Source: RMDB library TTRDEL, as collected in RNAgym. Structure probing data (2A3 and DMS) for a 177-nucleotide construct. For DMS, 4,246 sequencing reads were counted. Conditions: 150 mM KOAc, 10 mM MgCl2 and 150 mM bicine (pH 8.5), 24 C. For 2A3 the reverse transcriptase was SuperScript II with manganese.
RNA sequence: GGGAACGACUCGAGUAGAGUCGAAAAGAUAUGGAUAUGCGAACGAACUACUCUCAAUGUCGGAAACGACAUUCGAGAGCGGAGGUAUAUAUCCUAAGUCAAAUCUUGGAACUUCGGUUCCAAGAAAGUCGUUAACUAAGUUCGCUUAGUUAACGACAAAAGAAACAACAACAACAAC
Reactivity to 2A3 in 0.01 (KOAc 150mM, MgCl2 10mM, bicine 150mM(pH8.5), 24C), signal-to-noise 4, nucleotides 027 to 126: g020a000u070a040u140g000g020a010u010a010u040g060c110g070a100a020c010g020a100a050c100u140a060c010u120c000u000c000a010a000u000g010u010c000g000g000a070a040a030c010g010a000c010a010u030u080c150g000a010g000a000g010c030g020g030a060g060g120u030a150u020a000u000a000u210c000c020u030a120a010g040u040c040a050a020a250u000c000u000u000g000g010a000a000c010u040u050c290g130g000u000u000c000c000a000a000g000a000a000a000
Reactivity to DMS in 0.01 (KOAc 150mM, MgCl2 10mM, bicine 150mM(pH8.5), 24C), signal-to-noise 4, nucleotides 027 to 126: g000a060u000a290u010g000g000a030u000a010u000g000c050g000a030a060c030g000a160a300c020u000a070c000u010c000u000c000a020a010u010g000u000c000g020g000a100a060a200c010g010a010c000a000u000u000c140g020a010g010a000g020c070g000g010a040g000g020u010a080u010a070u000a020u010c000c000u000a080a140g010u000c030a060a090a120u000c000u000u000g000g010a020a010c000u000u000c210g020g000u000u000c000c010a000a010g020a010a030a070